[RMDB]
RNA sequence: GGGAACGACUCGAGUAGAGUCGAAAAAAGGGAUUUCAAAGCCUCCGCAGCCUGCUGCUCCACACCUCUGAGCAUCUGGGAAUCUCAGCCCGGGGCUGUGCACACAGUAGGAGCUACAUCGGCAGCACUCUAGGGAAUGGGGUCUGACAAGUGGUGAGUACCGCAUAAUCUUCGGAUUAUGCGGUACAAAAGAAACAACAACAACAAC
Reactivity to 2A3 in 0.01 (KOAc 150mM, MgCl2 10mM, bicine 150mM(pH8.5), 24C), signal-to-noise 2, nucleotides 027 to 156: a030a020g110g010g020a070u070u150u180c070a080a050a000g020c020c000u020c040c040g030c010a010g000c000c000u080g000c040u010g000c000u010c080c010a030c000a050c050c010u010c070u020g000a030g020c010a100u060c030u050g000g010g080a130a160u060c040u010c180a040g000c010c000c000g010g030g000g000c080u030g010u000g030c070a020c000a010c020a120g050u090a050g010g050a050g040c050u090a040c030a130u140c060g020g040c020a000g010c030a010c020u020c020u080a040g000g020g050a070a040u090g000g000g030g040u040c060u080g010a030c030a100a030g110u030g080g000u070g030a040

Record summary: Chemical mapping of a 207-nucleotide RNA with 2A3. 2A3 adducts were read by reverse transcription with SuperScript II with manganese. The 2A3 profile rests on 876 reads. Reactivities are given for positions 27 through 156.